[RMDB]
RNA sequence: GGGAACGACUCGAGUAGAGUCGAAAAACCUAGGACGAGGACAUGGCAUCCUAUUACCAGCCAUUGCACGAAAUUAAUAUGAUGCCACGUCCUCAUACUAGAUGAAACAACCACAUCAUAUCACGGGUUCAGAGAUUCGAUUCGUCGAAUCUCUGAAAAAAGAAACAACAACAACAAC
Reactivity to 2A3 in 0.01 (KOAc 150mM, MgCl2 10mM, bicine 150mM(pH8.5), 24C), signal-to-noise 4, nucleotides 027 to 126: a000c000c000u010a000g030g010a020c050g010a000g000g000a000c010a010u010g000g000c000a000u000c000c020u000a000u010u020a030c050c060a040g130c020c050a190u050u290g030c070a070c200g110a060a040a040u070u040a000a010u020a010u020g010a010u000g010c000c010a000c000g010u020c000c000u010c000a000u000a000c000u000a000g040a050u070g030a010a080a040c020a030a010c010c050a050c010a070u150c030a060u100a010u220c050a030c110g130g000g040
Reactivity to DMS in 0.01 (KOAc 150mM, MgCl2 10mM, bicine 150mM(pH8.5), 24C), signal-to-noise 3, nucleotides 027 to 126: a030c060c000u000a030g010g000a070c210g010a020g010g000a010c010a060u000g030g000c010a000u000c000c050u000a000u000u000a040c300c120a100g010c060c160a160u040u020g020c120a110c130g020a100a080a050u030u000a000a010u000a010u000g000a010u000g010c000c040a010c070g020u000c000c000u000c030a000u000a030c030u000a000g000a090u020g010a030a090a080c160a060a150c040c010a120c150a060u000c040a040u010a090u010c050a030c130g010g030g010